[RMDB]
RNA sequence: GGGAACGACUCGAGUAGAGUCGAAAAAUUUAGGAUUGUUGCCCUUGAUAUUCCAUUGCAAGUGACCAAUAUCCAAAAAGACCUUGCAAGUCAAUUUAACAUGUUGAUAGAUAGUUUAAAUGCUAUCCUGUAGCGUAGUAUUCGUACUACGCUACAGAAAAGAAACAACAACAACAAC
Reactivity to DMS in 0.01 (KOAc 150mM, MgCl2 10mM, bicine 150mM(pH8.5), 24C), signal-to-noise 2, nucleotides 027 to 126: a080u010u010u020a050g000g000a090u030u000g040u000u020g010c070c010c030u000u000g010a070u000a050u010u000c060c020a300u010u010g010c000a010a030g000u000g020a170c130c120a040a030u010a080u020c150c140a030a190a100a150a110g000a160c130c030u000u000g000c020a030a080g000u000c020a030a030u000u020u000a060a090c200a090u010g030u000u000g000a060u000a090g000a010u000a000g010u000u000u000a050a060a090u000g010c000u000a020u000c010